[RMDB]
Structure probing data (DMS and 2A3) for a 177-nucleotide construct. It was measured as part of the RMDB library RFMREP. The reactions ran in a buffer of 150 mM KOAc, 10 mM MgCl2 and 150 mM bicine (pH 8.5), at 24 C. The DMS profile rests on 1,180 reads.

RNA sequence: GGGAACGACUCGAGUAGAGUCGAAAACCUGUAAUCCUGGACGGACCACCAAUGGGGAAACCACGUUGAGAGACCGGACCCGACAGUGAGGGACGAAAGCCAGGGUCUCGAACCGGAUUAGAUACCCGUAAUAUAUUCCGUUCGCGGAAUAUAUUACAAAAGAAACAACAACAACAAC
Reactivity to DMS in 0.01 (KOAc 150mM, MgCl2 10mM, bicine 150mM(pH8.5), 24C), signal-to-noise 2, nucleotides 027 to 126: c030c000u000g000u000a060a060u010c020c000u020g010g010a300c060g000g000a070c030c030a270c070c060a050a070u020g000g000g000g030a150a090a190c040c030a050c100g010u000u000g000a280g010a150g000a020c060c040g000g010a080c010c000c020g000a130c160a070g000u010g020a200g010g020g020a170c030g000a040a060a140g000c050c030a070g010g020g000u010c010u000c010g000a080a120c060c040g000g000a090u000u000a040g000a170u010a180c070c060c100
Reactivity to 2A3 in 0.01 (KOAc 150mM, MgCl2 10mM, bicine 150mM(pH8.5), 24C), signal-to-noise 2, nucleotides 027 to 126: c000c000u000g060u030a050a000u010c000c000u070g010g030a030c020g000g010a010c010c000a030c030c050a030a090u050g010g000g000g060a030a020a080c030c020a120c070g040u020u060g110a120g000a010g010a090c050c000g080g000a100c000c000c010g030a040c030a070g100u070g160a180g000g000g020a020c030g140a100a020a010g010c020c010a040g040g010g070u010c050u010c030g010a030a030c000c000g000g030a040u010u020a020g010a030u090a070c040c070c050